[RMDB]
RNA sequence: GGGAACGACUCGAGUAGAGUCGAAAAUGAUCAGGAAGGGUUCUUCUGACUCGAAUGUUUCAUAAUCAGGGGUUUCCCAAGAAUACGUAUAUAGGCAGAAGAUGUUGGGCUGGAAAAGCUGGUUCAAGAAACUGAGGUAGAGCGUCAGAUGGAAAAAAUGGUCCAUUAGUUUCGACUAAUGGACCAUAAAAGAAACAACAACAACAAC
Reactivity to DMS in 0.01 (KOAc 150mM, MgCl2 10mM, bicine 150mM(pH8.5), 24C), signal-to-noise 1, nucleotides 027 to 156: u000g000a070u010c040a090g010g000a150a070g020g050g020u000u000c000u000u010c020u010g020a060c030u000c070g000a100a040u010g000u010u010u000c040a120u000a070a070u000c050a090g030g010g050g040u030u010u010c010c000c010a000a250g000a040a200u010a040c090g010u000a100u000a100u000a070g000g030c000a090g020a070a070g000a100u020g030u000u010g010g000g050c100u000g020g000a070a070a060a070g000c010u000g020g020u010u000c030a090a060g000a110a080a080c040u000g010a060g000g020u000a120g010a090g010c040g000u010c030a070g010a090u010g020g000a000a100a040a080a060
Reactivity to 2A3 in 0.01 (KOAc 150mM, MgCl2 10mM, bicine 150mM(pH8.5), 24C), signal-to-noise 1, nucleotides 027 to 156: u140g000a030u080c030a010g010g000a020a020g060g000g000u060u040c020u010u070c000u060g040a040c000u000c040g120a140a040u060g030u050u060u070c110a090u140a190a040u070c090a040g000g010g060g060u010u080u080c020c010c000a000a010g040a010a030u180a050c060g050u020a030u010a020u040a180g060g040c000a010g010a060a000g000a010u020g000u080u070g010g010g030c010u030g040g000a070a140a080a010g010c020u050g000g050u030u040c010a000a040g040a080a150a080c070u060g000a010g020g000u050a000g020a000g010c010g000u040c000a000g060a100u090g050g040a110a030a050a000a000
Structure probing data (DMS and 2A3) for a 207-nucleotide construct. Reactivities are rounded to 0.1 and cut off at 0 and 3. DMS adducts were read by reverse transcription with MarathonRT. The reactions ran in a buffer of 150 mM KOAc, 10 mM MgCl2 and 150 mM bicine (pH 8.5), at 24 C.